The record gives the reactivity of an RNA of 207 nucleotides to 2A3 and DMS. In probing experiments dimethyl sulfate is read out at A N1 and C N3, which are open when not base-paired. For 2A3 the reverse transcriptase was SuperScript II with manganese. The DMS profile rests on 4,202 reads.
RNA sequence: GGGAACGACUCGAGUAGAGUCGAAAAUAGCUGCAACAUUAUUUGAGUAUCCUGAAAACGGGCUUUUCAGAAUGGUGUUGUCGUAUAAAAUUGUAGGAGUGCAUAGUGGCCCGUAUAGCAGGCAUUAGAGAGCUACAGAUGUUCGCAUCUGUAGCAACAGACAAUUAGUCUUCGGACUAAUUGUCUGAAAAGAAACAACAACAACAAC
Reactivity to 2A3 in 0.01 (KOAc 150mM, MgCl2 10mM, bicine 150mM(pH8.5), 24C), signal-to-noise 2, nucleotides 027 to 156: u090a010g000c010u050g000c020a020a010c020a050u050u080a030u060u110u080g020a010g020u070a060u100c010c020u020g040a050a020a020a060c050g010g050g010c020u070u020u140u100c070a080g030a200a050u110g040g010u010g000u030u030g000u000c020g000u030a050u060a160a130a040a070u120u150g040u070a050g010g060a030g020u040g020c030a030u030a120g050u040g060g010c030c000c010g000u000a010u020a030g000c040a010g000g000c010a000u000u110a030g050a010g000a000g060c000u000a000c000a000g000a000u000g000u040u040c130g000c110a000u000c000u040g010u000a000g000c000a000a000
Reactivity to DMS in 0.01 (KOAc 150mM, MgCl2 10mM, bicine 150mM(pH8.5), 24C), signal-to-noise 2, nucleotides 027 to 156: u010a130g030c070u000g000c030a060a090c060a080u010u000a080u000u010u010g000a150g020u000a090u000c000c000u000g010a030a040a070a030c060g000g010g030c080u000u040u000u000c020a030g000a040a020u020g020g040u010g010u000u000g020u010c080g000u020a140u000a080a080a050a140u000u000g020u000a060g000g030a100g000u000g010c040a100u000a090g020u000g020g010c000c020c030g030u000a030u000a120g020c080a070g020g000c050a080u000u000a100g010a190g020a120g010c000u010a010c000a010g030a040u000g010u000u000c300g030c030a000u000c010u000g030u000a010g010c010a030a050